[RMDB]
RNA sequence: GGGAACGACUCGAGUAGAGUCGAAAAUCGAACGGGAUCAUUUCUAUAGUGAAUCCGAUCGUAUUGGGCUACAGCUCUUGACAACACCUCUGUCCGUGACGAUGAGUUAUCCAUCCCGCCGGGAACGCAAUUGUCGUAAGUUCGCUUACGACAAUUGAAAAGAAACAACAACAACAAC
Reactivity to DMS in 0.01 (KOAc 150mM, MgCl2 10mM, bicine 150mM(pH8.5), 24C), signal-to-noise 6, nucleotides 027 to 126: u000c010g020a020a130c000g020g020g010a040u000c000a010u000u000u010c290u020a140u000a030g030u000g000a030a040u000c010c010g010a070u000c010g010u010a100u000u000g010g000g010c030u000a070c120a150g000c030u000c030u000u000g010a090c100a060a080c100a080c060c040u000c060u000g010u000c030c050g010u000g010a080c110g010a090u000g010a090g020u000u010a090u010c050c060a080u000c000c000c010g020c070c050g000g010g010a060a060c200g000
Reactivity to 2A3 in 0.01 (KOAc 150mM, MgCl2 10mM, bicine 150mM(pH8.5), 24C), signal-to-noise 4, nucleotides 027 to 126: u090c000g010a010a010c020g000g000g030a010u000c010a010u030u110u000c190u230a200u230a220g010u000g030a040a030u000c000c010g000a020u020c010g000u050a090u020u120g030g020g000c030u110a080c050a060g000c010u010c000u040u090g040a050c030a070a030c010a070c030c010u040c040u090g030u000c010c030g040u040g030a020c030g030a050u090g000a030g050u050u060a060u050c020c020a040u030c010c010c000g000c030c010g020g000g020a060a010c040g010

Structure probing data (DMS and 2A3) for a 177-nucleotide construct. The RNA was probed in 150 mM KOAc, 10 mM MgCl2 and 150 mM bicine (pH 8.5) at 24 C. For 2A3 the reverse transcriptase was SuperScript II with manganese. The DMS profile rests on 6,078 reads.